[RMDB]
RNA sequence: GGGAACGACUCGAGUAGAGUCGAAAAGAUAUGGAUAUCUCCAUGAACCACUGGCCUCCGAUAAGCAUCGUUCGGAAACGAACGAAUGCUUUUGACGGAGGGUGGUUCAUGGAGAUAUCCUAAGUCACCCUUAAAAGUUCUUCGGAACUUUUAAGGGAAAAGAAACAACAACAACAAC
Reactivity to DMS in 0.01 (KOAc 150mM, MgCl2 10mM, bicine 150mM(pH8.5), 24C), signal-to-noise 1, nucleotides 027 to 126: g000a070u000a300u010g000g010a020u020a000u000c000u000c000c000a010u010g000a010a000c010c000a010c020u000g080g040c100c000u000c000c000g020a210u010a020a000g020c000a030u000c010g000u000u000c000g000g000a150a130a300c000g000a020a010c000g010a080a060u000g010c000u000u000u010u000g010a230c130g000g010a010g000g020g040u000g020g000u000u000c020a000u000g000g000a000g000a000u010a000u010c000c000u010a010a090g010u000c050a200
Description
The record gives the reactivity of an RNA of 177 nucleotides to DMS. Reactivities are given for positions 27 through 126. The RNA was probed in 150 mM KOAc, 10 mM MgCl2 and 150 mM bicine (pH 8.5) at 24 C. For DMS, 1,462 sequencing reads were counted. DMS (dimethyl sulfate) methylates the pairing face of unpaired adenines and cytosines.